[RMDB]
RNA sequence: GGGAACGACUCGAGUAGAGUCGAAAAGAUAUGGAUUUGCAGAACUACUCGACUCGGAAACGAGAGAACGAGCUGCUGAAUCCUAAGUCAAAACGUAUUAUUGCUUGUUCGCAAGCAAUAAUACGAAGUGGCCUUAUAGGUUCGCCUAUAAGGCCACAAAAGAAACAACAACAACAAC
Reactivity to DMS in 0.01 (KOAc 150mM, MgCl2 10mM, bicine 150mM(pH8.5), 24C), signal-to-noise 1, nucleotides 027 to 126: g000a060u020a300u010g010g010a010u020u010u000g000c000a010g000a050a050c060u030a300c000u000c000g000a110c020u000c010g000g000a150a030a190c010g000a060g010a070g000a080a080c020g000a010g000c000u000g030c000u000g030a010a010u000c000c000u030a060a130g000u000c020a070a040a080a150c020g020u000a020u000u000a000u010u010g030c000u000u000g010u010u010c190g030c000a000a000g000c000a000a010u000a010a010u000a000c000g000a010a020
Reactivity to 2A3 in 0.01 (KOAc 150mM, MgCl2 10mM, bicine 150mM(pH8.5), 24C), signal-to-noise 2, nucleotides 027 to 126: g060a060u080a040u170g000g000a000u000u010u070g000c000a000g000a120a070c110u160a080c000u300c000g100a070c020u020c020g000g000a030a030a030c030g000a010g010a030g000a230a040c040g020a000g020c010u020g000c030u040g050a010a010u030c030c000u030a100a020g070u070c050a020a000a080a080c000g000u010a000u020u000a000u010u000g000c000u010u010g030u090u120c300g020c180a020a010g000c000a010a010u000a030a010u000a010c000g000a050a030